RNA sequence: GGGAACGACUCGAGUAGAGUCGAAAACUAUUUCAAGUGUUAACAAGAAUAUCGAAGGACCUACUGGAUUCGAUCAUUCAGGACUAUGGGAUCCAGAGGGUAACCUCUGCAUGCUAUUCGAAAGCGAGACUAUAGACAUUUUCGAAUGUCUAUAGUCAAAAGAAACAACAACAACAAC
Reactivity to DMS in 0.01 (KOAc 150mM, MgCl2 10mM, bicine 150mM(pH8.5), 24C), signal-to-noise 9, nucleotides 027 to 126: c040u000a060u000u000u000c070a070a190g010u010g010u010u010a080a090c120a100a190g000a040a040u000a030u000c030g010a080a040g010g010a130c010c020u000a160c080u010g000g010a070u000u000c020g000a060u000c140a090u010u010c130a110g000g010a100c150u010a060u000g020g000g010a020u010c080c000a000g010a300g000g000g000u010a060a080c010c010u000c060u010g000c230a070u000g000c060u000a070u000u000c060g010a060a080a090g000c090g010a140
Reactivity to 2A3 in 0.01 (KOAc 150mM, MgCl2 10mM, bicine 150mM(pH8.5), 24C), signal-to-noise 9, nucleotides 027 to 126: c010u050a130u060u170u140c070a110a070g040u040g060u220u170a100a070c050a070a060g020a050a040u050a030u100c030g050a050a020g060g050a090c000c010u080a160c060u160g000g000a020u000u030c040g110a070u050c030a030u150u170c080a060g120g060a030c050u080a070u100g060g000g010a010u000c000c010a000g030a020g000g000g010u020a030a040c010c000u030c020u030g040c030a070u120g010c010u060a060u090u100c030g070a100a030a050g060c040g030a050